[RMDB]
RNA sequence: GGGAACGACUCGAGUAGAGUCGAAAAGAUAUGGAUCUUUCAGGACAUGCGACCACUCGGAAACGAGUGGCAACAGCCUGGAGAUCCUAAGUCAAAACGGAAAUGAUACUUCGGUAUCAUUUCCGAAGUCUUUAUAGAGCUUCGGCUCUAUAAAGACAAAAGAAACAACAACAACAAC
Reactivity to DMS in 0.01 (KOAc 150mM, MgCl2 10mM, bicine 150mM(pH8.5), 24C), signal-to-noise 2, nucleotides 027 to 126: g000a050u000a300u000g000g000a000u000c000u000u000u000c000a010g000g020a150c120a110u000g030c180g020a290c020c000a020c000u000c000g000g010a120a090a130c000g000a040g010u000g000g000c040a030a030c080a080g020c000c000u020g030g000a020g000a020u000c000c000u000a010a070g010u010c030a070a050a050a200c050g000g000a000a000a000u010g000a040u000a000c000u010u000c260g050g000u000a000u000c000a030u000u000u000c000c000g000a010a020
Reactivity to 2A3 in 0.01 (KOAc 150mM, MgCl2 10mM, bicine 150mM(pH8.5), 24C), signal-to-noise 1, nucleotides 027 to 126: g020a000u050a020u120g000g000a000u000c030u040u240u300c000a030g040g000a100c090a300u170g050c070g080a150c000c010a000c010u020c010g010g000a010a040a080c000g000a000g000u000g020g020c010a000a010c010a000g070c010c000u000g000g000a000g000a000u000c000c010u000a050a010g020u000c010a060a030a090a120c020g000g020a010a000a010u010g010a010u010a010c000u050u120c300g070g000u000a000u030c010a000u000u000u010c010c000g000a000a020